[RMDB]
RNA sequence: GGGAACGACUCGAGUAGAGUCGAAAACGUCGUGUUCGCACGACGAAAAACCGUAGGAUGGAGAACUACUUCCGAAAGUUCGAAGAACUUCGAAAGAGGGGAGAACUAGUAGCUGAAGCUCCAUCCUAAACGGAAAAAACGAUGCUUCGGCAUCGAAUGAUACAGCACCGUUCGCGGUGCUGUAUCAAAAAGAAACAACAACAACAAC
Reactivity to 2A3 in 0.01 (KOAc 150mM, MgCl2 10mM, bicine 150mM(pH8.5), 24C), signal-to-noise 1, nucleotides 027 to 156: c000g030u020c000g000u010g000u040u040c110g000c080a000c030g000a000c000g010a000a000a000a000a000c030c000g000u040a030g000g000a000u000g020g040a010g030a100a070c040u060a050c010u300u060c030c060g030a040a000a080g010u010u010c030g110a160a060g000a110a000c010u020u040c010g080a060a080a110g000a060g010g050g010g010a040g000a000a010c000u010a010g020u050a000g000c120u210g040a020a000g030c000u020c000c000a000u000c000c000u000a000a010a000c000g010g030a000a170a000a000a000a170c000g000a030u020g000c000u060u120c170g100g010c000a000u030c000g010a000a010

The data come from the RNA Mapping Database (RMDB), library RNAMAK.
Structure probing data (2A3) for a 207-nucleotide construct.
For 2A3, 822 sequencing reads were counted.
The RNA was probed in 150 mM KOAc, 10 mM MgCl2 and 150 mM bicine (pH 8.5) at 24 C.
Values cover nucleotides 27 to 156.